[RMDB]
RNA sequence: GGGAACGACUCGAGUAGAGUCGAAAAGCAGACUGAAGAACAUUUCCAUGGUUACUGAGAGUUCUACUCAGCACUUCUGUUGUGAAGGAUUCACCUUCCCCAAGCUGUGUGCCACAUUUCACACAGCAGGUGCACAGGGAUGCCAGCUCUCUUAAAACACUACUUUUAGUUUCGACUAAAAGUAGUGAAAAGAAACAACAACAACAAC
Reactivity to 2A3 in 0.01 (KOAc 150mM, MgCl2 10mM, bicine 150mM(pH8.5), 24C), signal-to-noise 6, nucleotides 027 to 156: g040c030a010g030a100c050u130g050a100a030g040a100a070c040a130u090u110u070c070c040a110u130g110g000u120u150a100c070u090g000a000g000a010g070u060u040c010u040a070c030u020c030a020g010c030a030c030u110u080c030u080g130u180u060g050u090g050a030a030g020g010a040u120u140c070a180c050c000u000u000c010c010c000c000a060a030g000c000u000g000u000g000u020g040c070c040a180c060a200u110u210u140c000a030c000a010c010a010g000c010a010g030g010u060g020c050a020c030a050g020g030g040a040u060g060c030c020a030g010c000u000c000u000c000u060u160a060a090a010a050
Reactivity to DMS in 0.01 (KOAc 150mM, MgCl2 10mM, bicine 150mM(pH8.5), 24C), signal-to-noise 3, nucleotides 027 to 156: g020c050a090g030a120c050u010g010a110a110g000a070a090c050a090u000u010u010c020c040a140u000g010g000u000u000a070c050u020g020a030g010a170g000u000u000c030u000a060c030u000c020a060g040c010a030c040u010u000c030u010g020u000u000g020u000g000a070a060g000g020a240u000u000c100a100c080c030u000u020c000c010c000c050a060a150g000c010u000g030u000g010u000g000c280c100a070c150a170u010u010u000c020a020c020a040c010a010g020c000a020g000g040u000g020c090a080c040a100g020g030g000a100u000g020c010c050a100g000c050u010c000u000c020u010u000a040a090a050a230